Structure probing data (DMS and 2A3) for a 207-nucleotide construct. Conditions: 150 mM KOAc, 10 mM MgCl2 and 150 mM bicine (pH 8.5), 24 C. Values cover nucleotides 27 to 156.
RNA sequence: GGGAACGACUCGAGUAGAGUCGAAAAGUAUCCCUAGAUGAUAAAACACCGCACAUGGCUCGUAAGAGCGGUUAAAUUAGCAAGUAAUGCAAAUUACGCGAGGUCACGCAUGGCCUAGGCUCGUUAGAAAAGGGAGAAUCCUUCGGGAUUCUCCCAACGGUACUAAUAACUUCGGUUAUUAGUACCGAAAAGAAACAACAACAACAAC
Reactivity to DMS in 0.01 (KOAc 150mM, MgCl2 10mM, bicine 150mM(pH8.5), 24C), signal-to-noise 2, nucleotides 027 to 156: g020u010a110u000c000c000c000u000a170g020a090u000g010a110u000a050a090a150a130c050a100c010c000g010c070a120c070a170u000g010g060c000u000c020g010u000a170a130g000a110g000c000g040g030u010u000a040a110a100u000u000a110g040c060a120a100g010u000a020a060u000g010c130a070a110a090u000u010a040c060g000c010g020a050g000g020u000c000a100c050g030c130a110u000g010g000c010c000u000a080g020g040c000u000c090g040u000u000a130g000a070a040a070a220g010g040g010a020g000a020a030u000c000c000u000u000c300g010g000g030a000u000u000c000u000c010c000c000a000a000
Reactivity to 2A3 in 0.01 (KOAc 150mM, MgCl2 10mM, bicine 150mM(pH8.5), 24C), signal-to-noise 3, nucleotides 027 to 156: g040u030a100u100c000c000c000u020a040g080a190u080g050a060u180a110a060a040a000c020a020c000c020g080c010a020c010a100u100g090g000c030u040c080g030u060a140a000g030a010g070c000g010g010u030u050a040a100a060u050u060a020g050c050a050a060g080u100a150a030u130g010c060a080a080a020u090u040a030c030g010c020g020a010g030g060u030c010a000c080g090c070a110u080g030g000c010c010u000a020g030g030c010u010c060g050u030u050a060g080a090a100a040a060g000g000g000a000g000a000a000u000c000c000u000u060c120g010g000g000a000u000u000c000u000c000c000c010a000a000